The record gives the reactivity of an RNA of 177 nucleotides to 2A3. The RNA was probed in 150 mM KOAc, 10 mM MgCl2 and 150 mM bicine (pH 8.5) at 24 C.
RNA sequence: GGGAACGACUCGAGUAGAGUCGAAAAGGGCCUUUUUGGCCCAUCAGGAUUCUUUUCUGUGGGCUGCUUGCGCCCAACGCGCCUGCGAACUAAAUACUUUCAUUUUCUCUAUGAACUUCCAGAGUGCCAUGGCCCGAACUUUCGAGUUCGGGCCAUGAAAAGAAACAACAACAACAAC
Reactivity to 2A3 in 0.01 (KOAc 150mM, MgCl2 10mM, bicine 150mM(pH8.5), 24C), signal-to-noise 1, nucleotides 027 to 126: g000g000g090c040c000u050u150u070u160u290g090g000c040c000c000a020u090c020a000g000g010a010u030u170c050u090u150u040u060c040u090g010u100g000g040g000c000u020g000c000u160u070g000c090g070c010c000c000a030a030c000g050c000g030c000c010u030g000c050g020a000a000c090u060a010a110a050u260a020c040u090u120u030c030a080u020u000u100u000c020u000c020u180a010u080g020a090a030c040u000u050c000c000a000g020a000g250u000g050c020